Chemical mapping of a 207-nucleotide RNA with DMS and 2A3. Values cover nucleotides 27 to 156. For DMS the reverse transcriptase was MarathonRT.
RNA sequence: GGGAACGACUCGAGUAGAGUCGAAAAGCUAUGGUGCAACUCUUUAAGGAAAUAACGAACUAAUUCUAAGCAAGUAAUGGAGAAAUGCCAGGGUCACUAUCUAGCCAUAAUAGUGCUUGACAGUAUGAGAAUCUGCUACCCUUCGGGGUAGCAGAAAGAGUAUAUGCGAGUUCGCUCGCAUAUACUCAAAAGAAACAACAACAACAAC
Reactivity to DMS in 0.01 (KOAc 150mM, MgCl2 10mM, bicine 150mM(pH8.5), 24C), signal-to-noise 1, nucleotides 027 to 156: g020c020u000a050u010g020g040u010g000c030a070a110c070u000c040u000u010u000a070a210g020g000a030a060a100u030a060a170c070g020a090a070c040u000a070a130u020u000c060u000a100a100g000c040a020a200g000u000a060a060u020g000g020a130g000a020a100a050u000g010c030c020a080g000g020g000u000c040a030c020u010a020u000c010u000a160g040c060c100a130u000a020a090u000a100g000u000g000c070u000u030g000a060c000a030g030u010a060u010g050a140g020a100a120u020c000u000g000c000u000a020c010c000c000u000u000c300g010g010g020g010u000a010g020c000a000g010a000a020a040
Reactivity to 2A3 in 0.01 (KOAc 150mM, MgCl2 10mM, bicine 150mM(pH8.5), 24C), signal-to-noise 2, nucleotides 027 to 156: g020c030u020a020u070g030g000u050g010c040a080a160c050u060c050u080u180u130a130a090g050g080a050a070a070u190a130a060c080g080a040a010c020u030a060a050u050u100c000u060a030a030g110c090a040a040g040u080a010a110u060g040g020a020g060a080a110a060u060g050c070c010a010g060g000g000u010c000a000c030u030a020u040c010u030a030g060c010c000a020u020a190a090u050a080g040u040g030c010u030u040g030a030c020a010g040u060a090u150g090a050g040a080a100u000c000u020g000c000u010a000c000c000c000u010u050c000g000g000g030g000u000a000g020c000a000g000a000a000a000